[RMDB]
RNA sequence: GGGAACGACUCGAGUAGAGUCGAAAACGUAAAGCAAGGACGGUCCAAGGGCGAGUCGACCUCUCCAUCGGCACGAGGACGUGCCUGGUUUUGAGUGGGGGAGGAUGUUACGGACAAAUUCCGUAACCGUGUGAGGCCAACAUCAAAGAUGCGUACCCAUCGGAAAUAAGUUCGCUUAUUUCCGAUGAAAAGAAACAACAACAACAAC
Reactivity to DMS in 0.01 (KOAc 150mM, MgCl2 10mM, bicine 150mM(pH8.5), 24C), signal-to-noise 3, nucleotides 027 to 156: c070g020u000a030a090a140g010c080a120a100g020g010a120c110g010g000u000c030c030a080a150g000g010g020c060g010a100g050u000c040g020a120c030c020u010c040u000c030c040a110u020c110g030g030c020a070c020g020a170g030g020a280c020g030u010g000c010c000u000g020g000u010u000u010u020g010a150g020u020g020g020g010g040g020a050g030g010a110u000g000u000u000a020c000g000g030a070c030a120a080a230u000u000c000c010g010u000a010a010c000c100g000u000g030u000g010a140g000g020c040c020a070a000c030a070u000c040a140a110a120g000a080u010g030c040g020u000a290c020c040
Reactivity to 2A3 in 0.01 (KOAc 150mM, MgCl2 10mM, bicine 150mM(pH8.5), 24C), signal-to-noise 8, nucleotides 027 to 156: c020g020u060a070a030a050g060c050a030a080g060g020a020c060g010g020u010c040c030a060a080g060g020g010c030g020a030g050u060c030g060a090c010c000u020c010u000c020c020a090u100c030g010g000c040a010c020g050a140g180g180a090c040g000u000g000c000c000u020g050g000u020u080u080u160g110a090g020u130g000g010g000g010g010a020g020g000a020u050g000u000u000a000c000g000g000a020c110a090a190a090u240u000c000c000g000u010a010a000c010c010g040u070g040u060g060a060g010g030c020c020a020a030c010a050u100c050a050a080a030g050a020u100g010c030g020u050a060c010c010
Overview: This 207-nucleotide RNA was probed chemically with DMS and 2A3. Reactivities are given for positions 27 through 156. The 2A3 profile rests on 10,478 reads. It was measured as part of the RMDB library VIROID. 2A3 adducts were read by reverse transcription with SuperScript II with manganese. DMS adducts were read by reverse transcription with MarathonRT.